[RMDB]
RNA sequence: GGGAACGACUCGAGUAGAGUCGAAAAGCAGUUGACUUCGGUCAACUGCAAAUAAACCUCAAGACGUGCACAGGGAGGAACGUCUUGAGCAACCCAAUAAAAAAACAUGUAAGUUCGCUUACAUGAAGCUUACCAGGAGGUUCGCCUCCUGGUAAGCAAAAGAAACAACAACAACAAC
Reactivity to 2A3 in 0.01 (KOAc 150mM, MgCl2 10mM, bicine 150mM(pH8.5), 24C), signal-to-noise 1, nucleotides 027 to 126: g000c000a000g000u000u000g000a010c000u030u050c200g080g000u000c010a000a000c000u000g010c000a000a000a000u000a000a010a000c000c010u000c000a000a010g040a000c020g020u070g000c120a100c090a300g210g050g000a180g020g000a030a000c000g000u030c000u010u000g020a000g000c010a010a040c010c000c000a010a040u260a030a050a000a000a000a020a020c010a010u000g000u000a020a000g000u010u070c220g030c110u030u000a000c000a000u010g040a020a010